Structure probing data (DMS and 2A3) for a 207-nucleotide construct. The RNA was probed in 150 mM KOAc, 10 mM MgCl2 and 150 mM bicine (pH 8.5) at 24 C.
[RMDB]
RNA sequence: GGGAACGACUCGAGUAGAGUCGAAAACAAUGUGUUCGCACAUUGGCGUCGCGUACUACUCGUCAGCAAUGAUGUAUGACUCCCCACCAUAUCCCAAAUAGGAUAUGAGGUCAUAUUGAGCUGGCGAGUAUCGCUUGUGAGAGGGUUCGCCCUCUAAAAUGAUGAUACCUUUCGAGGUAUCAUCAUUAAAAGAAACAACAACAACAAC
Reactivity to DMS in 0.01 (KOAc 150mM, MgCl2 10mM, bicine 150mM(pH8.5), 24C), signal-to-noise 7, nucleotides 027 to 156: c010a020a000u010g040u000g020u000u000c300g020c010a020c010a010u000u000g020g010c130g010u010c150g020c010g020u020a090c150u000a020c000u000c010g050u000c000a010g030c020a110a090u010g020a070u000g000u000a000u000g000a020c010u000c300c120c040c030a300c230c000a020u000a010u000c000c000c010a050a170a270u000a060g010g020a040u000a000u000g010a260g010g010u000c000a020u000a020u000u000g000a040g020c000u000g010g000c010g000a010g010u000a000u000c020g000c040u000u000g010u000g010a080g010a020g010g010g000u000u010c100g030c020c000c000u000c010u000a010a110
Reactivity to 2A3 in 0.01 (KOAc 150mM, MgCl2 10mM, bicine 150mM(pH8.5), 24C), signal-to-noise 6, nucleotides 027 to 156: c010a000a000u010g040u010g020u080u130c250g080c140a010c000a020u010u020g040g030c040g140u250c120g020c030g030u100a090c040u010a000c000u020c000g010u000c010a000g010c010a070a300u200g020a030u100g080u020a000u000g000a000c030u110c050c050c010c000a000c000c010a000u000a000u020c000c020c040a160a290a090u230a080g000g000a000u000a000u000g020a010g000g000u010c000a000u000a000u010u020g020a010g000c010u000g010g000c000g000a000g000u000a000u010c000g010c010u060u120g050u100g060a030g000a000g010g040g010u070u180c210g150c020c010c000u010c000u000a040a050